[RMDB]
RNA sequence: GGGAACGACUCGAGUAGAGUCGAAAAGCUACUUUCUGGGACGGUAAAGAUUAUGUAGCGCCUCAUCACCAUAGUGGUAAAUUCUCGGAAUUAGUAAUGAUGCAUUUGGAAAAAACAUUCCCUAGUUUAGCCAUCAAAUACAGUGAAGAAAGCAAAGAACAGUCAACCUAUUCGUAGGUUGACUGUUAAAAGAAACAACAACAACAAC
Reactivity to DMS in 0.01 (KOAc 150mM, MgCl2 10mM, bicine 150mM(pH8.5), 24C), signal-to-noise 3, nucleotides 027 to 156: g020c020u000a020c030u000u000u010c020u010g030g000g030a080c020g000g050u010a090a130a110g000a130u000u010a110u000g020u000a050g000c040g040c030c020u030c070a150u000c030a050c050c070a110u000a060g040u000g010g010u000a050a040a100u000u000c050u000c020g030g030a030a090u000u000a060g010u010a070a150u000g010a100u000g020c060a140u010u000u010g020g020a000a050a110a080a060a070c060a130u000u000c010c010c010u010a040g000u010u010u000a080g030c020c040a050u000c040a030a080a050u010a050c050a090g020u000g040a050a060g020a070a020a100g010c040a030a050a130g000
Reactivity to 2A3 in 0.01 (KOAc 150mM, MgCl2 10mM, bicine 150mM(pH8.5), 24C), signal-to-noise 4, nucleotides 027 to 156: g020c000u000a000c000u030u090u050c040u060g060g000g070a020c070g030g040u100a070a050a010g030a070u130u100a090u230g030u020a010g010c000g070c010c000u030c030a070u050c030a030c050c010a080u100a130g050u040g050g020u040a050a060a050u090u010c050u030c030g050g030a060a060u080u040a100g030u060a070a100u060g060a050u050g040c070a090u030u070u170g040g000a100a060a010a010a000a010c020a050u030u040c000c000c010u030a050g010u050u030u080a020g010c020c000a020u020c040a040a120a070u090a110c030a020g040u010g090a040a010g040a080a080a000g030c080a020a090a030g100

An RNA of 207 nucleotides, treated with DMS and 2A3 and read out base by base.
2A3 adducts were read by reverse transcription with SuperScript II with manganese.
Conditions: 150 mM KOAc, 10 mM MgCl2 and 150 mM bicine (pH 8.5), 24 C.
The 2A3 profile rests on 2,661 reads.
For DMS the reverse transcriptase was MarathonRT.